This 177-nucleotide RNA was probed chemically with DMS and 2A3. Conditions: 150 mM KOAc, 10 mM MgCl2 and 150 mM bicine (pH 8.5), 24 C. The data come from the RNA Mapping Database (RMDB), library TTRDES. For DMS the reverse transcriptase was MarathonRT. 2A3 adducts were read by reverse transcription with SuperScript II with manganese.

RNA sequence: GGGAACGACUCGAGUAGAGUCGAAAAGAUAUGGAAUGGUGAAGAAGCUCCCAUUCGGAAACGAAUGGAGUAGUUCUCACCAUUCCUAAGUCAAAAGAGCAUCUCAUGCUUCGGCAUGAGAUGCUCAGACUCAGCAAAUGUUCGCAUUUGCUGAGUCAAAAGAAACAACAACAACAAC
Reactivity to DMS in 0.01 (KOAc 150mM, MgCl2 10mM, bicine 150mM(pH8.5), 24C), signal-to-noise 1, nucleotides 027 to 126: g000a000u000a300u020g000g010a020a000u000g010g060u010g000a000a050g030a140a250g010c000u000c120c000c050a020u010u000c000g040g000a020a050a170c010g010a030a010u000g000g000a070g030u010a020g020u020u000c030u010c010a010c000c000a010u010u000c000c000u010a010a090g000u020c010a080a050a140a180g010a010g000c000a010u000c010u000c000a000u000g000c000u000u000c250g030g050c000a010u020g010a060g000a010u000g010c000u000c000a010
Reactivity to 2A3 in 0.01 (KOAc 150mM, MgCl2 10mM, bicine 150mM(pH8.5), 24C), signal-to-noise 1, nucleotides 027 to 126: g000a030u030a070u120g000g000a010a000u000g060g040u020g050a230a300g040a160a080g230c000u040c070c070c010a000u030u000c020g010g030a070a070a020c000g020a000a010u000g000g020a110g060u270a050g010u120u020c000u020c000a000c000c000a010u000u000c000c000u000a010a030g000u000c020a020a000a030a290g000a000g000c020a000u010c000u000c020a020u000g020c030u080u110c300g030g000c020a000u000g000a000g000a010u000g030c010u010c010a000